[RMDB]
RNA sequence: GGGAACGACUCGAGUAGAGUCGAAAAAAAGUAACAAUGGAAACUCAUGCAUUAUCUGACGAUUGUUUAGAUUGUGUAUAUGAUUGGUAUGCGGAAAAAAAUGGACAAUUUUUUAGUGCAACGAGUCAGCCCAGUAUGUUUUCGAACAUACUGGGCUAAAAGAAACAACAACAACAAC
Reactivity to 2A3 in 0.01 (KOAc 150mM, MgCl2 10mM, bicine 150mM(pH8.5), 24C), signal-to-noise 2, nucleotides 027 to 126: a000a000a000g160u090a010a010c230a050a040u150g100g000a070a000a110c040u020c000a020u000g000c000a020u000u000a080u030c040u110g070a050c000g190a230u090u060g040u000u030u000a030g010a010u100u070g000u000g000u000a010u040a000u180g300a300u010u010g020g000u010a020u010g000c060g050g230a000a000a000a000a000a000a160u010g030g050a050c050a020a020u010u010u010u010u050u010a010g030u030g010c000a000a130c030g020a030g020u020c000
Reactivity to DMS in 0.01 (KOAc 150mM, MgCl2 10mM, bicine 150mM(pH8.5), 24C), signal-to-noise 2, nucleotides 027 to 126: a030a050a150g030u040a030a010c160a080a050u050g040g000a080a060a070c090u010c040a120u010g000c000a000u000u000a000u000c030u000g020a040c120g030a130u020u030g040u060u020u010a000g000a050u000u010g000u000g000u000a020u040a050u000g020a070u000u010g030g040u010a030u030g000c010g000g030a000a000a000a020a000a090a020u010g000g010a100c080a070a010u000u000u000u000u040u000a030g000u000g000c010a040a030c100g000a050g000u010c050
An RNA of 177 nucleotides, treated with 2A3 and DMS and read out base by base. The DMS profile rests on 2,224 reads. For 2A3, 872 sequencing reads were counted. Reactivities are given for positions 27 through 126. For DMS the reverse transcriptase was MarathonRT. 2A3 adducts were read by reverse transcription with SuperScript II with manganese.